[RMDB]
RNA sequence: GGGAACGACUCGAGUAGAGUCGAAAACAAUGAAUUUAUGACCAAAUAUAAUCUUGAUAAAUUAAAUGCCAGUUACUUCGAGAAAAAAAUUUCAGAAAUCAAUCAAGAAUCAUACUGGUUUGAUAAACGAUCACGUAUCAUUCGUGAUACGUGAUCGAAAAGAAACAACAACAACAAC
Reactivity to 2A3 in 0.01 (KOAc 150mM, MgCl2 10mM, bicine 150mM(pH8.5), 24C), signal-to-noise 2, nucleotides 027 to 126: c010a040a130u190g100a120a090u190u300u120a130u210g140a030c020c020a000a100a040u150a060u040a100a050u030c000u130u000g000a030u100a030a300a020u150u280a200a130a000u220g000c020c000a000g020u030u010a070c020u000u010c030g140a100g030a210a080a000a000a000a000a000u020u080u050c100a020g120a030a090a080u110c050a020a030u020c010a000a100g000a130a040u110c080a000u040a110c000u000g000g130u020u020u010g010a010u110a010a180a000
This 177-nucleotide RNA was probed chemically with 2A3. The reactions ran in a buffer of 150 mM KOAc, 10 mM MgCl2 and 150 mM bicine (pH 8.5), at 24 C.